Chemical mapping of a 177-nucleotide RNA with DMS and 2A3. For DMS, 2,598 sequencing reads were counted. The RNA was probed in 150 mM KOAc, 10 mM MgCl2 and 150 mM bicine (pH 8.5) at 24 C.
RNA sequence: GGGAACGACUCGAGUAGAGUCGAAAAGGGUAGAUCUUCGGAUCUACCCAAAAGGAGCAACCAACGAAGGAAGUGCUAGCUUAAGCGUGCAGGCUAGCACUAAAAGGUUCCGCUUCGGCGGAACCAAGCAUUCAAAUAACUUCGGUUAUUUGAAUGCAAAAGAAACAACAACAACAAC
Reactivity to DMS in 0.01 (KOAc 150mM, MgCl2 10mM, bicine 150mM(pH8.5), 24C), signal-to-noise 2, nucleotides 027 to 126: g010g000g030u000a010g010a010u000c000u000u010c160g030g010a010u000c000u000a000c000c000c000a000a010a030a080g000g000a080g010c020a070a130c030c070a080a110c160g010a100a140g030g000a140a010g010u000g000c000u000a010g000c000u000u000a100a100g000c090g010u000g010c090a090g000g000c000u010a010g010c000a010c000u020a010a040a110a080g010g000u000u000c000c000g000c010u000u010c140g030g020c000g000g000a010a010c000c000a020a060
Reactivity to 2A3 in 0.01 (KOAc 150mM, MgCl2 10mM, bicine 150mM(pH8.5), 24C), signal-to-noise 3, nucleotides 027 to 126: g020g000g000u000a000g000a000u020c000u040u070c250g010g010a000u010c000u010a010c000c000c010a000a010a000a000g020g010a050g060c020a010a060c010c010a010a070c130g120a120a040g200g040a070a010g010u000g000c000u000a000g000c000u100u060a160a020g080c050g160u100g040c100a000g000g000c010u000a010g000c000a000c000u000a000a000a000a020g000g000u000u000c000c000g000c020u020u040c180g090g000c000g000g030a010a000c000c000a000a000